[RMDB]
Notes:
Structure probing data (DMS and 2A3) for a 177-nucleotide construct. Reactivities are given for positions 27 through 126. For 2A3 the reverse transcriptase was SuperScript II with manganese. It was measured as part of the RMDB library TTRDEL. For 2A3, 14,648 sequencing reads were counted. The reactions ran in a buffer of 150 mM KOAc, 10 mM MgCl2 and 150 mM bicine (pH 8.5), at 24 C.
RNA sequence: GGGAACGACUCGAGUAGAGUCGAAAAGAUAUGGAGUAUUCUGCACUCCAUCGAUCUCGGAAACGAGGGAGGAGGCAGAGAUACUCCUAAGUCAAAACCGUCGAAACUGUUCGCAGUUUCGACGGAACGAAAUGCUAUUGUUCGCAAUAGCAUUUCGAAAAGAAACAACAACAACAAC
Reactivity to DMS in 0.01 (KOAc 150mM, MgCl2 10mM, bicine 150mM(pH8.5), 24C), signal-to-noise 3, nucleotides 027 to 126: g010a050u000a300u010g010g000a020g010u000a010u010u000c010u000g010c010a170c010u000c000c000a260u000c140g000a040u010c000u010c000g000g000a140a110a200c010g000a010g010g000g010a020g020g000a020g000g000c000a000g000a030g000a010u000a010c000u010c000c000u000a010a090g010u000c040a070a060a120a150c010c000g010u000c000g000a020a000a010c000u000g000u010u010c200g020c000a010g020u000u000u000c000g010a000c000g000g000a010a040
Reactivity to 2A3 in 0.01 (KOAc 150mM, MgCl2 10mM, bicine 150mM(pH8.5), 24C), signal-to-noise 5, nucleotides 027 to 126: g020a010u060a060u170g000g010a010g010u000a020u030u030c000u020g030c160a300c300u000c010c010a030u210c010g020a030u000c000u010c020g000g060a120a110a060c010g000a010g020g000g000a010g010g000a010g010g020c010a000g030a020g020a010u000a000c000u000c000c000u010a070a010g020u010c020a010a000a090a210c010c000g000u000c000g000a000a020a000c020u030g090u110u130c300g000c170a000g000u010u000u000c000g000a000c000g000g000a010a000